Chemical mapping of a 177-nucleotide RNA with 2A3 and DMS. For 2A3 the reverse transcriptase was SuperScript II with manganese. DMS adducts were read by reverse transcription with MarathonRT. The DMS profile rests on 939 reads. In probing experiments dimethyl sulfate is read out at A N1 and C N3, which are open when not base-paired. As a SHAPE reagent, 2A3 marks flexible, mostly unpaired nucleotides at the ribose 2'-OH.

[RMDB]
RNA sequence: GGGAACGACUCGAGUAGAGUCGAAAAUCAAAUAAAGCGCACCAAUAUGGAGGUGCGCAACCAGCGUGUCCAAGGAUCACGCAUCCUCGCGUCUACCAAGACGCGAAAGGUAUUACAAAUAAAAAAAGCAUAUAGUCAUGUUCGCAUGACUAUAUGCAAAAGAAACAACAACAACAAC
Reactivity to 2A3 in 0.01 (KOAc 150mM, MgCl2 10mM, bicine 150mM(pH8.5), 24C), signal-to-noise 3, nucleotides 027 to 126: u080c000a000a000a070u240a100a190a000g000c000g010c000a000c010c020a080a040u240a150u300g160g000a170g000g010u010g000c000g000c010a000a000c000c030a010g000c010g010u000g000u060c040c030a160a120g190g000a060u140c000a010c010g000c010a040u030c000c000u000c010g000c010g000u000c010u070a220c030c030a050a060g000a010c000g000c000g010a010a000a000g010g000u010a040u090u110a070c110a060a110a080u300a120a160a040a010a010a000a060
Reactivity to DMS in 0.01 (KOAc 150mM, MgCl2 10mM, bicine 150mM(pH8.5), 24C), signal-to-noise 1, nucleotides 027 to 126: u010c150a070a070a200u000a020a120a080g030c000g000c020a000c000c010a120a140u020a140u030g040g000a160g000g010u000g010c000g020c000a000a060c070c040a190g000c020g030u000g020u000c040c080a090a120g030g000a050u000c030a000c000g080c040a110u000c120c020u000c000g000c000g020u000c000u020a190c300c260a070a010g010a030c000g040c000g000a000a000a080g020g000u000a000u000u050a150c160a140a130a040u030a060a010a050a110a040a120a110